[RMDB]
RNA sequence: GGGAACGACUCGAGUAGAGUCGAAAAGUGUGAAGUGAGGCUCCCGCUUACGAGCACGAAUUACAUGGGAGUGUUAACAUUACUGGGCGCCAGGAGCCCUACCUGGACAAGUAGCGAAGUACAGCCCGAGUAUGAGCUACGACUAAUUACGGGCACAGAUCCGAGUAAUAUUCGUAUUACUCGGAUCAAAAGAAACAACAACAACAAC
Reactivity to 2A3 in 0.01 (KOAc 150mM, MgCl2 10mM, bicine 150mM(pH8.5), 24C), signal-to-noise 4, nucleotides 027 to 156: g060u050g010u020g080a050a050g030u030g050a040g060g010c030u010c020c000c000g020c020u040u060a030c060g030a010g040c020a020c080g060a180a140u190u120a110c090a130u120g020g030g030a050g010u060g070u070u100a090a060c070a100u060u090a090c080u090g070g080g000c130g000c000c010a010g000g010a050g000c000c010c010u010a030c000c000u000g000g000a020c010a040a100g000u010a000g000c010g050a080a000g040u000a000c010a030g010c010c000c000g000a030g000u020a010u180g040a030g000c000u000a010c020g030a010c010u020a000a070u090u080a050c080g000g000g000c000a010c020a030
Reactivity to DMS in 0.01 (KOAc 150mM, MgCl2 10mM, bicine 150mM(pH8.5), 24C), signal-to-noise 1, nucleotides 027 to 156: g000u000g000u000g020a070a160g010u000g020a110g000g000c000u000c010c000c010g000c110u000u000a110c050g050a230g060c010a140c030g050a100a170u020u020a140c130a060u010g020g000g000a110g030u000g000u000u000a020a050c070a070u010u010a110c000u010g020g050g010c030g000c020c030a030g010g000a140g000c010c010c000u000a030c010c030u000g050g030a090c130a090a150g010u000a050g030c000g020a140a090g010u000a050c010a080g000c060c000c000g000a150g020u020a070u010g010a300g020c020u000a040c020g010a100c120u000a070a090u000u000a060c090g000g000g040c000a130c130a180